About this RNA
Conditions: 150 mM KOAc, 10 mM MgCl2 and 150 mM bicine (pH 8.5), 24 C. Structure probing data (2A3) for a 177-nucleotide construct. It was measured as part of the RMDB library OK1LIB.
RNA sequence: GGGAACGACUCGAGUAGAGUCGAAAAUCUGCCGCCGGGUACGGGUGACGAGCAGCUGACGAUAGCUCAGCUUAUACCAGGGUUAAGCGGCACCAUUAUAGUCACGAUACCGUCGGAUGUAGCCAGGGUAGCUCCCGAUCUUCGGAUCGGGAGCUACAAAAGAAACAACAACAACAAC
Reactivity to 2A3 in 0.01 (KOAc 150mM, MgCl2 10mM, bicine 150mM(pH8.5), 24C), signal-to-noise 1, nucleotides 027 to 126: u050c000u000g000c000c000g070c000c000g000g070g020u100a060c050g000g140g000u000g020a090c030g030a050g060c010a000g000c040u000g000a000c070g150a170u060a120g080c150u000c000a040g010c000u020u000a010u080a090c000c210a110g000g040g100u200u030a140a020g000c070g000g020c000a000c010c010a030u050u020a210u040a130g170u120c050a000c030g000a070u100a020c000c000g010u000c020g010g010a120u200g060u060a000g020c000c140a130g000g140